[RMDB]
RNA sequence: GGGAACGACUCGAGUAGAGUCGAAAACUGUGCUAUUCCAUCAGCCUACAGACCUGGUACCUGGAUUUUUGCCCGAGAUGAUUCCUACCACCUUACUACUGACGAAGACACCCAUUCCAGUGGACCAAAACAAAUAACGCUUCGGCGUUAUUUGUUUAAAAGAAACAACAACAACAAC
Reactivity to DMS in 0.01 (KOAc 150mM, MgCl2 10mM, bicine 150mM(pH8.5), 24C), signal-to-noise 3, nucleotides 027 to 126: c040u000g030u030g010c020u010a070u000u000c030c020a100u050c080a100g010c020c020u020a140c080a070g000a090c070c050u000g000g020u020a040c040c020u000g000g000a070u020u000u000u040u020g000c010c000c040g030a080g020a050u010g000a140u010u000c050c050u000a130c050c070a090c020c020u000u000a080c050u000a030c030u000g010a080c090g000a080a100g000a130c080a030c010c000c000a130u000u000c010c030a070g010u000g010g010a110c060c070a080
Reactivity to 2A3 in 0.01 (KOAc 150mM, MgCl2 10mM, bicine 150mM(pH8.5), 24C), signal-to-noise 5, nucleotides 027 to 126: c030u040g020u060g050c010u040a070u130u070c010c000a040u040c050a060g010c010c020u050a060c010a030g050a090c000c010u040g030g020u060a050c020c000u040g090g010a180u020u060u030u090u200g050c000c000c020g030a050g000a060u120g020a040u060u080c010c000u030a070c000c010a020c000c010u050u100a070c020u040a020c010u040g040a040c020g040a030a000g060a010c010a030c030c030c010a010u070u020c010c020a020g010u050g030g080a050c020c030a050